[RMDB]
RNA sequence: GGGAACGACUCGAGUAGAGUCGAAAAGAUAUGGAGAUCCUGUUUUGCACUCUCUUAGGCGAUGAGUCCACGCAUCGGAAACGAUGUGGACGAGCCUAAGAGAGUGCAAAACGUCAUCUCCUAAGUCCGUUAAUAGGGAGUUCGCUCCCUAUUAACGAAAAGAAACAACAACAACAAC
Reactivity to DMS in 0.01 (KOAc 150mM, MgCl2 10mM, bicine 150mM(pH8.5), 24C), signal-to-noise 5, nucleotides 027 to 126: g000a110u010a300u000g000g010a020g010a000u000c100c040u010g010u000u000u000u000g010c000a000c010u000c000u000c000u000u000a010g000g010c010g010a180u020g040a300g010u000c000c010a060c080g000c260a070u000c000g010g010a130a110a230c010g010a020u000g020u000g000g000a000c000g010a150g010c000c000u000a000a000g000a000g010a000g000u000g000c000a000a000a010a000c000g010u000c080a020u000c000u000c000c000u000a050a150g000u010c040
Structure probing data (DMS) for a 177-nucleotide construct.
Source: RMDB library TTRINS, as collected in RNAgym.
The RNA was probed in 150 mM KOAc, 10 mM MgCl2 and 150 mM bicine (pH 8.5) at 24 C.